[RMDB]
RNA sequence: GGGAACGACUCGAGUAGAGUCGAAAACUACGUGUGCUGCCGAGCUCCGGCAGUUCCACCUGGCAACACGCAAUCCUGCCCGUGGCAACAUUUGGCCUCGUAAAUGCCGCCGCGAUCGCACGCUUCGACGCCUCAGUCGAUUCGUCGACUGAGGCGUAAAAGAAACAACAACAACAAC
Reactivity to 2A3 in 0.01 (KOAc 150mM, MgCl2 10mM, bicine 150mM(pH8.5), 24C), signal-to-noise 1, nucleotides 027 to 126: c030u090a030c140g050u070g010u020g000c040u010g020c000c000g050a100g030c080u090c010c040g010g000c000a010g000u030u060c000c010a030c020c020u010g060g010c020a060a040c050a060c100g000c030a000a090u020c000c000u020g010c010c050c000g090u050g000g010c020a110a010c050a140u070u090u260g030g000c000c000u070c020g020u090a020a080a060u080g000c000c000g020c020c000g090c000g020a010u020c020g000c080a030c020g000c010u000u030c060g070